Source: RMDB library VIROID, as collected in RNAgym. The record gives the reactivity of an RNA of 177 nucleotides to DMS and 2A3. The RNA was probed in 150 mM KOAc, 10 mM MgCl2 and 150 mM bicine (pH 8.5) at 24 C.
RNA sequence: GGGAACGACUCGAGUAGAGUCGAAAAAGUGGAAACCCGCUUUAUUCACUGGGGUCGACAACUCUGGGGAGAAAAGGGAGGAUCGGAUGGGAAGAGUAUAUCCUAUGGGAAUCCCUGGUUUCCCCUCGUAUUGGUUAAUGUUCGCAUUAACCAAUACAAAAGAAACAACAACAACAAC
Reactivity to DMS in 0.01 (KOAc 150mM, MgCl2 10mM, bicine 150mM(pH8.5), 24C), signal-to-noise 3, nucleotides 027 to 126: a050g020u000g020g000a110a100a170c290c020c010g010c030u010u010u000a070u030u000c040a070c020u000g010g020g000g000u000c020g010a090c180a070a090c070u010c070u000g000g000g010g000a020g000a030a020a070a010g000g000g020a030g000g010a190u010c030g010g010a080u010g010g010g010a020a100g000a140g010u000a090u010a060u010c010c000u000a070u000g010g010g000a300a130u010c010c000c010u010g000g020u010u000u000c010c010c000c030u010c140
Reactivity to 2A3 in 0.01 (KOAc 150mM, MgCl2 10mM, bicine 150mM(pH8.5), 24C), signal-to-noise 3, nucleotides 027 to 126: a000g030u030g030g030a280a180a140c050c010c000g010c050u100u090u080a220u070u090c030a010c060u010g030g000g000g000u020c020g020a040c030a140a050c010u000c070u110g000g000g000g020a020g020a000a020a020a000g000g020g000a000g030g010a050u090c050g040g110a050u110g040g010g010a090a020g090a070g280u090a070u040a040u140c000c000u020a030u060g010g020g000a010a030u010c020c020c000u000g000g020u000u030u000c000c000c010c000u000c050